[RMDB]
Description:
The data come from the RNA Mapping Database (RMDB), library 15KREP. Structure probing data (DMS) for a 177-nucleotide construct. Conditions: 150 mM KOAc, 10 mM MgCl2 and 150 mM bicine (pH 8.5), 24 C.

RNA sequence: GGGAACGACUCGAGUAGAGUCGAAAAUGUGCUCCUGCCUCUCCUUGUCGGUGAACCCCCUGGCCUUGGGUUUCCUCCCAGGUCCGAAAUCAACCUCCAUGGUUUCCUGCCUGGGCCUCUUCGCCGGACUAUAUUUCCGGUUCGCCGGAAAUAUAGUAAAAGAAACAACAACAACAAC
Reactivity to DMS in 0.01 (KOAc 150mM, MgCl2 10mM, bicine 150mM(pH8.5), 24C), signal-to-noise 1, nucleotides 027 to 126: u020g020u000g020c050u000c000c010u000g020c030c030u010c020u010c030c030u000u010g020u010c030g000g020u010g030a050a190c040c020c010c030c010u010g010g020c030c010u000u000g000g010g010u000u010u000c150c080u000c000c020c010a020g010g010u010c050c100g010a020a050a030u010c130a030a100c060c020u000c050c030a150u010g010g030u010u000u010c020c050u010g000c020c030u010g000g010g020c050c020u000c060u000u000c050g020c050c040g000g010

For DMS the reverse transcriptase was MarathonRT.